[RMDB]
RNA sequence: GGGAACGACUCGAGUAGAGUCGAAAAGCAUGACCGCGAAAGAUACGUGUUGGCGAGAACUCACCAAGCUUGUGCCCAACUAGAUUCUCUGUCACAUAGACAGGAACAAAAAUCUUACCGUUAUGCAUAUGUACUCCGGGUUCGCCCGGAGUACAUAAAAAGAAACAACAACAACAAC
Reactivity to 2A3 in 0.01 (KOAc 150mM, MgCl2 10mM, bicine 150mM(pH8.5), 24C), signal-to-noise 2, nucleotides 027 to 126: g040c020a010u010g010a030c040c050g050c100g040a040a000a000g020a010u050a030c110g070u110g010u070u020g020g000c030g000a040g030a070a040c010u050c110a100c010c010a040a000g000c020u070u010g100u150g090c010c000c000a000a010c000u050a040g090a300u020u000c280u000c010u020g000u030c010a050c090a220u080a050g000a000c010a000g000g000a010a020c030a010a050a010a000a000u010c010u010u020a060c010c040g010u020u030a040u030g000c000a040
Reactivity to DMS in 0.01 (KOAc 150mM, MgCl2 10mM, bicine 150mM(pH8.5), 24C), signal-to-noise 2, nucleotides 027 to 126: g000c010a000u000g000a020c030c060g040c080g020a100a070a020g000a010u000a060c150g030u000g000u000u000g000g050c010g040a090g010a070a030c120u000c180a100c070c130a070a070g010c040u000u020g000u000g000c090c020c020a010a040c060u000a120g000a220u000u000c030u020c000u000g010u000c000a160c300a160u000a150g000a010c000a030g020g010a000a000c100a000a050a040a030a020u000c000u000u000a140c250c250g000u020u000a000u000g020c010a210
This 177-nucleotide RNA was probed chemically with 2A3 and DMS.
The reactions ran in a buffer of 150 mM KOAc, 10 mM MgCl2 and 150 mM bicine (pH 8.5), at 24 C.
High 2A3 reactivity points to a flexible backbone, as in loops and unpaired stretches.
It was measured as part of the RMDB library OK2TST.